Notes
This 207-nucleotide RNA was probed chemically with 2A3. High 2A3 reactivity points to a flexible backbone, as in loops and unpaired stretches.
RNA sequence: GGGAACGACUCGAGUAGAGUCGAAAACAUCUGAAGGAGCUCUUUCUCAUGGGGAACCCAUGUGCUUCCUUUGACCACUAUAGGGAGUUCGUGGUAGCAACUCUUCCACAAUUAAAGGUAUGGUUCUUUUAAUGGUGCAGAAAUCACAGAUAAAUGAGAGUGAUAAAUGCUUCGGCAUUUAUCACUCAAAAGAAACAACAACAACAAC
Reactivity to 2A3 in 0.01 (KOAc 150mM, MgCl2 10mM, bicine 150mM(pH8.5), 24C), signal-to-noise 2, nucleotides 027 to 156: c010a050u060c010u120g090a080a050g010g000a030g010c010u000c040u070u060u100c000u010c060a000u040g010g000g000g110a140a080c000c000c000a020u030g030u000g010c000u070u070c010c020u090u010u120g080a060c020c020a070c060u100a010u100a080g000g010g000a010g030u060u080c020g000u050g010g030u050a020g050c080a050a020c020u000c000u220u080c010c000a060c010a040a100u150u090a260a030a040g100g010u130a110u130g050g000u070u060c000u050u010u020u060a020a130u000g010g010u030g060c060a010g120a050a070a010u150c060a010c060a050g130a090u200a110a190a050u300g050a060